[RMDB]
An RNA of 177 nucleotides, treated with DMS and 2A3 and read out base by base.
RNA sequence: GGGAACGACUCGAGUAGAGUCGAAAAUGCUGGCGCUCAAGGCGCUAGACUCGAUCAUAGCCGCCAGCAAUGCGGUCUCCGCGCGCCCUUCGGGGUUGUGCGUUUAUGUCGAGCCGUGGCACCGCGAAGUAAAGCACGGAUUCGUCCGUGCUUUACUAAAAGAAACAACAACAACAAC
Reactivity to DMS in 0.01 (KOAc 150mM, MgCl2 10mM, bicine 150mM(pH8.5), 24C), signal-to-noise 2, nucleotides 027 to 126: u010g010c000u000g000g000c030g030c080u010c240a100a130g010g020c040g020c060u000a010g000a050c070u010c060g000a050u020c070a090u020a070g010c020c020g000c020c130a100g000c150a100a070u010g020c040g000g000u000c050u010c190c010g020c010g010c010g000c000c000c000u000u000c180g040g010g020g020u000u020g010u000g010c000g000u000u020u000a050u000g000u000c020g000a040g030c040c010g040u020g010g010c180a100c020c010g000c120g020a060
Reactivity to 2A3 in 0.01 (KOAc 150mM, MgCl2 10mM, bicine 150mM(pH8.5), 24C), signal-to-noise 2, nucleotides 027 to 126: u090g000c000u030g000g050c020g000c070u080c150a130a130g090g000c040g040c000u020a000g000a010c030u040c040g130a180u130c030a060u060a030g000c040c010g000c010c070a060g090c110a050a020u060g000c000g000g050u070c020u090c080c010g000c000g000c000g010c000c000c000u020u060c300g070g000g020g000u200u300g010u020g000c010g000u010u100u080a060u050g060u030c020g000a020g000c010c000g040u080g000g000c020a020c100c000g020c040g070a050

The 2A3 profile rests on 1,631 reads.